[RMDB]
RNA sequence: GGGAACGACUCGAGUAGAGUCGAAAAGAUAUGGACGUGAUAGCAAGGCCGUCGGAAACGACAGGCUGAUGACCUAUACGUCCUAAGUCAAAAGUCCUAUAAGAAAGUUCGCUUUCUUAUAGGACAACAGAGACCAAUUGUUCGCAAUUGGUCUCUGAAAAGAAACAACAACAACAAC
Reactivity to 2A3 in 0.01 (KOAc 150mM, MgCl2 10mM, bicine 150mM(pH8.5), 24C), signal-to-noise 1, nucleotides 027 to 126: g020a020u060a040u140g000g000a020c020g020u040g130a020u010a030g060c000a070a130g020g020c000c000g010u040c030g020g030a100a090a040c040g010a000c130a120g000g010c020u010g020a050u170g000a010c020c010u000a000u000a020c010g010u000c000c000u010a100a030g080u020c050a000a130a000a150g000u000c000c020u010a000u000a000a000g010a010a000a010g020u110u170c240g080c130u020u000u000c000u000u000a000u000a000g000g000a000c000a000a000
Reactivity to DMS in 0.01 (KOAc 150mM, MgCl2 10mM, bicine 150mM(pH8.5), 24C), signal-to-noise 3, nucleotides 027 to 126: g020a080u000a300u000g000g010a000c010g010u000g020a050u000a010g000c020a180a230g000g000c010c000g020u000c000g010g000a100a110a130c010g000a030c020a090g090g000c000u000g000a300u000g010a060c300c030u010a040u010a010c010g000u010c010c000u010a050a040g010u000c040a090a050a190a180g010u000c000c000u010a010u000a000a010g000a010a030a000g020u000u020c280g000c010u000u000u000c000u000u000a010u000a020g000g010a020c000a000a020
An RNA of 177 nucleotides, treated with 2A3 and DMS and read out base by base. Source: RMDB library TTRDEL, as collected in RNAgym. For DMS, 1,482 sequencing reads were counted.